[RMDB]
RNA sequence: GGGAACGACUCGAGUAGAGUCGAAAAAUGGCAGUUUUAAAAAAACCAUCUAGUAAGGUAAAUGACCGGACGAGCGUUACAUAAAACGCAUACCUAACUAAUGAAGAAUUUGAAACUGUACAAUGUGUCCUCAGCGUUUUUUCGAAAACGCUGAGGAAAAAGAAACAACAACAACAAC
Reactivity to 2A3 in 0.01 (KOAc 150mM, MgCl2 10mM, bicine 150mM(pH8.5), 24C), signal-to-noise 2, nucleotides 027 to 126: a000u120g000g000c000a000g000u030u000u000u100a000a000a000a000a000a000a040c000c000a000u060c010u040a010g000u000a010a010g040g020u010a070a180a130u160g130a100c120c140g040g030a000c050g030a070g010c000g030u040u000a110c030a080u160a300a200a000a000c000g000c000a000u030a000c000c000u000a040a020c000u000a000a000u000g020a000a010g030a000a040u000u000u000g000a010a000a000c000u000g000u030a130c060a010a010u070g030u030g040
Chemical mapping of a 177-nucleotide RNA with 2A3. The RNA was probed in 150 mM KOAc, 10 mM MgCl2 and 150 mM bicine (pH 8.5) at 24 C. Reactivities are given for positions 27 through 126. For 2A3 the reverse transcriptase was SuperScript II with manganese.